Notes:
This 177-nucleotide RNA was probed chemically with DMS and 2A3. In probing experiments dimethyl sulfate is read out at A N1 and C N3, which are open when not base-paired. The reactions ran in a buffer of 150 mM KOAc, 10 mM MgCl2 and 150 mM bicine (pH 8.5), at 24 C.
[RMDB]
RNA sequence: GGGAACGACUCGAGUAGAGUCGAAAAAGACCGUUGAUCACGGCCUGUGAAUGGCAAUCAAGCCACCGUCUUUUCUGUAAACAGGUUCUCUUGUGCAAAUCGCGUUUCAUGGACAGACGGUGUCUUGAUCUAGGUAAAAGUUCGCUUUUACCUAGAUAAAAGAAACAACAACAACAAC
Reactivity to DMS in 0.01 (KOAc 150mM, MgCl2 10mM, bicine 150mM(pH8.5), 24C), signal-to-noise 9, nucleotides 027 to 126: a040g000a090c020c010g020u010u010g010a140u020c160a070c060g000g000c010c010u000g010u020g010a130a110u010g000g010c120a140a080u020c010a010a010g010c050c000a010c000c000g000u000c000u000u000u000u000c010u000g010u030a010a010a010c010a140g000g010u000u000c090u010c190u010u020g020u010g010c170a070a020a020u000c010g000c170g010u000u000u000c050a030u010g010g000a010c240a010g000a010c010g000g010u000g000u000c000u000u000g000
Reactivity to 2A3 in 0.01 (KOAc 150mM, MgCl2 10mM, bicine 150mM(pH8.5), 24C), signal-to-noise 4, nucleotides 027 to 126: a000g090a040c010c010g030u050u100g070a130u130c060a020c070g070g010c010c010u100g010u050g140a160a130u100g030g000c030a020a030u030c000a000a010g000c000c000a000c000c000g000u000c000u010u030u010u000c010u030g130u220a000a010a010c010a010g030g000u050u020c110u020c000u150u220g140u100g110c070a040a030a030u030c040g020c080g090u000u010u010c060a060u140g010g000a000c000a010g000a000c000g010g000u000g000u000c000u000u000g000